Conditions: 150 mM KOAc, 10 mM MgCl2 and 150 mM bicine (pH 8.5), 24 C. The record gives the reactivity of an RNA of 207 nucleotides to 2A3 and DMS. Reactivities are rounded to 0.1 and cut off at 0 and 3.

RNA sequence: GGGAACGACUCGAGUAGAGUCGAAAAGGUAUUCCUGUUGGAUCAGGACUCAGGGGCAAGGCUAAGCAUUCCAGUGGUCCUCCUACUUAGCUCUUGUCCUUUCGUAAGAAACACCAACUCAUUAGUCUCUAUAUUACUUCUCUGUACUGUAGAUCUAGUAUUUAUACCGAUUCGUCGGUAUAAAUACAAAAGAAACAACAACAACAAC
Reactivity to 2A3 in 0.01 (KOAc 150mM, MgCl2 10mM, bicine 150mM(pH8.5), 24C), signal-to-noise 7, nucleotides 027 to 156: g130g030u100a090u070u030c000c010u010g020u000u040g050g040a160u120c070a060g050g050a030c030u040c080a010g000g000g010g010c010a010a000g010g000c000u010a000a000g020c040a110u230u160c110c070a080g080u110g130g080u180c040c060u080c010c000u020a020c000u000u000a000g000c010u020c000u280u010g000u010c000c000u000u010u010c010g000u020a060a030g030a080a060a000c060a050c020c010a010a030c030u040c100a090u070u060a060g060u020c030u000c010u110a010u010a050u140u050a060c020u140u110c090u010c050u150g050u030a050c010u030g030u050a010g010a050u050c010u060a030
Reactivity to DMS in 0.01 (KOAc 150mM, MgCl2 10mM, bicine 150mM(pH8.5), 24C), signal-to-noise 2, nucleotides 027 to 156: g030g020u010a130u000u000c020c000u000g000u000u010g040g010a110u000c060a070g030g030a120c070u000c060a170g030g010g000g000c010a020a040g010g010c010u000a020a020g030c020a060u000u000c020c000a090g010u010g020g020u000c050c030u000c030c020u000a040c020u010u000a030g000c010u010c010u010u000g000u010c010c000u000u000u000c050g030u000a090a120g000a130a100a090c050a120c030c010a030a070c030u010c070a110u000u000a100g000u000c030u000c010u040a080u000a110u000u010a050c030u000u010c050u000c060u010g020u000a080c080u000g010u000a070g010a150u000c040u010a270